The record gives the reactivity of an RNA of 177 nucleotides to DMS and 2A3. The RNA was probed in 150 mM KOAc, 10 mM MgCl2 and 150 mM bicine (pH 8.5) at 24 C. For 2A3, 1,581 sequencing reads were counted. Values are in units of 0.01, from 0 to 300, in steps of 10. DMS adducts were read by reverse transcription with MarathonRT.
RNA sequence: GGGAACGACUCGAGUAGAGUCGAAAAGUUUAAAGUGGAUAAGUUUGAAUACUGGUAUAGUAUGUUUUAUGCCCCUUUUUAGGGCUGUCUUCAACAGUAUCGUUUGAAUACAGGGUAUCCCAUUGUAACUUUACGUUAACUUCGGUUAACGUAAAGUAAAAGAAACAACAACAACAAC
Reactivity to DMS in 0.01 (KOAc 150mM, MgCl2 10mM, bicine 150mM(pH8.5), 24C), signal-to-noise 5, nucleotides 027 to 126: g010u000u000u000a010a020a050g020u010g010g000a050u000a040a080g010u010u010u010g010a160a030u000a010c010u000g010g030u010a090u010a040g010u000a020u000g010u010u010u000u000a020u000g000c010c000c020c020u000u000u010u000u000a040g010g010g010c010u000g000u000c060u000u000c010a010a010c030a140g010u010a080u010c200g000u010u000u000g000a020a020u000a020c020a020g000g000g020u010a110u000c010c000c000a170u000u010g020u010a110
Reactivity to 2A3 in 0.01 (KOAc 150mM, MgCl2 10mM, bicine 150mM(pH8.5), 24C), signal-to-noise 2, nucleotides 027 to 126: g010u000u060u090a090a040a000g020u030g020g010a020u040a050a040g030u020u270u210g160a150a020u020a050c010u030g020g140u130a040u050a160g000u020a050u040g110u030u240u010u010a040u120g150c000c000c000c010u000u060u030u050u080a070g000g000g050c000u000g000u000c010u000u010c000a030a010c000a040g060u070a130u220c070g010u000u050u100g050a020a010u000a010c000a000g040g010g020u070a040u000c040c010c000a040u020u100g090u070a030
Source information:
The data come from the RNA Mapping Database (RMDB), library OK2TST. 2A3 adducts were read by reverse transcription with SuperScript II with manganese.